[RMDB]
RNA sequence: GGGAACGACUCGAGUAGAGUCGAAAAGAGCUGGGUUUAGACCGUCGUGAGACAGGUUAGUUUUACCCUACUGUGUGGACUGUGCAGCAGAUCUUGAUAGUACGAGAGGAACUCUUGAUUGCGACCUCUGGUGGAGCGGCGUGCCUGCUGGCUGCUGGCAUUUUGUAUAGUUCGCUAUACAAAAUGCAAAAGAAACAACAACAACAAC
Reactivity to 2A3 in 0.01 (KOAc 150mM, MgCl2 10mM, bicine 150mM(pH8.5), 24C), signal-to-noise 7, nucleotides 027 to 156: g100a020g020c070u070g010g030g040u050u100u130a040g020a030c010c010g010u020c010g030u050g050a100g010a040c080a100g010g020u030u050a040g040u030u060u070u120a060c020c010c000u030a060c050u030g050u020g020u050g070g030a040c040u030g020u060g080c040a040g000c000a010g030a120u020c010u030u050g030a030u030a050g030u030a040c040g010a020g000a040g070g040a060a050c010u000c000u070u060g050a070u050u110g030c000g030a080c000c010u030c040u050g020g010u040g020g040a040g020c020g000g000c010g020u040g020c000c020u050g020c020u020g030g010c010u020g010c010u010g050
Reactivity to DMS in 0.01 (KOAc 150mM, MgCl2 10mM, bicine 150mM(pH8.5), 24C), signal-to-noise 4, nucleotides 027 to 156: g000a080g020c020u000g010g000g020u000u010u000a130g010a030c000c010g020u000c020g030u010g000a300g010a030c020a100g070g000u000u010a060g010u000u010u000u000a080c010c020c010u000a050c020u010g020u000g020u000g010g020a090c050u010g030u000g010c030a110g010c030a090g020a060u000c040u000u000g000a090u000a120g020u000a120c050g010a160g000a140g020g010a140a090c110u000c020u000u000g000a160u000u000g000c020g010a120c040c010u010c020u000g000g010u010g010g010a080g010c050g010g010c050g040u000g000c030c030u000g050c010u000g020g020c040u010g000c010u010g010

Structure probing data (2A3 and DMS) for a 207-nucleotide construct. For DMS the reverse transcriptase was MarathonRT. The RNA was probed in 150 mM KOAc, 10 mM MgCl2 and 150 mM bicine (pH 8.5) at 24 C. Values cover nucleotides 27 to 156. It was measured as part of the RMDB library PDB130. For DMS, 14,280 sequencing reads were counted.